Chemical mapping of a 177-nucleotide RNA with DMS. DMS adducts were read by reverse transcription with MarathonRT. The RNA was probed in 150 mM KOAc, 10 mM MgCl2 and 150 mM bicine (pH 8.5) at 24 C. The data come from the RNA Mapping Database (RMDB), library OK2TST.
RNA sequence: GGGAACGACUCGAGUAGAGUCGAAAACGACGAGGCGCUGUGGGAUGAGGCGCCGGACUUUGCGGUGGACGCAUUGCUGCUGACGCCACUACUACAUCCAGUGGCGCUUCCAGCCGACGUGAAGGAAACUAGUACUGGUGUUCGCACCAGUACUAGUAAAAGAAACAACAACAACAAC
Reactivity to DMS in 0.01 (KOAc 150mM, MgCl2 10mM, bicine 150mM(pH8.5), 24C), signal-to-noise 5, nucleotides 027 to 126: c070g000a100c170g010a080g000g000c010g020c020u000g020u010g010g000g010a030u000g010a200g010g010c010g010c000c000g010g010a050c040u000u000u000g010c030g030g010u010g030g010a270c030g000c030a030u000u000g010c140u000g000c070u000g000a060c010g000c010c000a100c130u010a120c260u010a210c100a040u000c010c010a090g010u000g000g010c000g010c010u010u000c050c060a070g000c030c030g000a120c090g000u000g010a100a090g010g000a110a130